[RMDB]
RNA sequence: GGGAACGACUCGAGUAGAGUCGAAAAAGUCAAGUGCGUGAUCACCGACGGUUAAGCCCGGAGCGUAUUGUACGGCAUGAUGAUGAUUUGGCGCCACCGAACGAAUCAACCUCAGGGGAGAGCAGCCCUUACCUCUCUUUUUCGAAAGAGAGGUAAGAAAAGAAACAACAACAACAAC
Reactivity to DMS in 0.01 (KOAc 150mM, MgCl2 10mM, bicine 150mM(pH8.5), 24C), signal-to-noise 8, nucleotides 027 to 126: a100g010u000c040a060a120g020u000g020c040g020u000g010a090u010c050a060c040c040g000a110c070g000g010u000u010a080a180g010c100c020c030g010g010a130g000c060g000u000a060u000u010g020u000a050c070g010g010c040a070u000g000a060u010g000a090u000g000a110u000u000u000g010g010c040g010c050c060a060c050c030g000a070a070c090g000a050a050u000c070a040a110c070c030u010c060a080g000g000g000g010a090g000a080g020c070a080g010c070c080
Reactivity to 2A3 in 0.01 (KOAc 150mM, MgCl2 10mM, bicine 150mM(pH8.5), 24C), signal-to-noise 5, nucleotides 027 to 126: a000g070u060c040a060a010g020u030g080c040g050u070g050a050u070c020a000c050c010g050a050c020g030g040u080u130a070a020g020c000c040c030g020g030a070g000c050g020u060a090u080u210g050u090a050c040g030g000c060a050u070g020a040u040g010a010u030g020a050u090u010u110g050g000c040g000c030c010a030c010c020g030a040a040c020g030a030a050u060c020a040a050c010c020u050c070a040g000g030g000g020a060g010a010g010c010a020g000c020c000